[RMDB]
RNA sequence: GGGAACGACUCGAGUAGAGUCGAAAAGAUAUGGAUCCGGUAGAGCGAUAAGAUGCGGAUCGGAAACGAUCCGGCAUCUUUUGACGCUCAAACGGAUCCUAAGUCAAAGUCUUACUUCGGUAAGACAGGAUAGCAUAAUCUUCGGAUUAUGCUAUCCAAAAGAAACAACAACAACAAC
Reactivity to DMS in 0.01 (KOAc 150mM, MgCl2 10mM, bicine 150mM(pH8.5), 24C), signal-to-noise 4, nucleotides 027 to 126: g010a040u000a300u000g000g000a000u000c000c010g040g010u010a300g000a000g020c010g030a220u020a020a020g000a010u010g010c020g000g000a020u000c000g010g010a090a090a200c000g000a010u010c000c000g020g020c000a010u000c000u010u000u000u000g020a260c100g000c000u000c010a010a060a290c020g020g000a010u000c000c000u010a010a070g000u010c040a080a100a180g000u000c000u000u000a020c000u000u030c210g050g000u000a010a000g000a020c000a100
Reactivity to 2A3 in 0.01 (KOAc 150mM, MgCl2 10mM, bicine 150mM(pH8.5), 24C), signal-to-noise 2, nucleotides 027 to 126: g020a010u070a040u160g000g020a000u000c000c010g000g040u100a050g010a010g000c020g020a020u030a180a000g010a010u000g000c010g020g000a010u010c010g000g010a100a080a020c020g000a000u000c010c030g010g060c010a000u000c000u000u030u000u000g010a010c010g000c020u030c020a040a070a010c020g000g020a000u000c000c000u010a010a010g020u000c040a100a090a100g000u000c010u000u000a010c020u030u100c300g120g000u010a010a000g020a000c000a000

Record summary: This 177-nucleotide RNA was probed chemically with DMS and 2A3. For DMS the reverse transcriptase was MarathonRT. In probing experiments dimethyl sulfate is read out at A N1 and C N3, which are open when not base-paired. The 2A3 profile rests on 6,721 reads. Conditions: 150 mM KOAc, 10 mM MgCl2 and 150 mM bicine (pH 8.5), 24 C. It was measured as part of the RMDB library TTRDES.